[RMDB]
RNA sequence: GGGAACGACUCGAGUAGAGUCGAAAAACGUCAACGUACUCCUAACGCGUACGGAAGGUAAACUGGUAUGGAAGACACUCUCCGGUGACCCGUGGAUAAAGGUAGACGGUGCUGCCUGCGGCUCAACAGCAUCUUAAGUAUUCGUACUUAAGAUGCUAAAAGAAACAACAACAACAAC
Reactivity to DMS in 0.01 (KOAc 150mM, MgCl2 10mM, bicine 150mM(pH8.5), 24C), signal-to-noise 9, nucleotides 027 to 126: a070c070g020u010c070a100a100c050g010u010a040c040u000c050c060u020a090a110c210g010c150g000u020a050c050g000g000a080a040g010g000u020a040a080a080c040u010g000g010u010a100u020g010g020a100a070g010a110c080a080c050u000c060u000c000c010g000g000u010g000a070c050c040c020g010u010g000g010a070u030a050a080a070g010g010u010a050g010a060c070g000g020u010g000c040u010g000c030c020u010g010c070g010g000c040u010c050a060a080c180
Reactivity to 2A3 in 0.01 (KOAc 150mM, MgCl2 10mM, bicine 150mM(pH8.5), 24C), signal-to-noise 9, nucleotides 027 to 126: a000c060g050u060c060a060a040c060g040u050a050c030u040c020c030u080a120a030c060g020c000g050u060a040c020g040g040a040a040g060g040u140a070a100a100c070u100g050g040u130a090u130g100g060a050a040g040a040c010a010c030u030c000u010c010c000g040g010u040g060a080c000c010c030g040u070g020g020a090u130a150a140a030g070g010u040a020g020a050c040g010g030u050g030c020u030g010c000c010u030g020c020g040g000c020u010c060a030a100c030
The record gives the reactivity of an RNA of 177 nucleotides to DMS and 2A3.
The RNA was probed in 150 mM KOAc, 10 mM MgCl2 and 150 mM bicine (pH 8.5) at 24 C.
For DMS the reverse transcriptase was MarathonRT.
It was measured as part of the RMDB library OK1LIB.
The DMS profile rests on 30,611 reads.
High 2A3 reactivity points to a flexible backbone, as in loops and unpaired stretches.
Values cover nucleotides 27 to 126.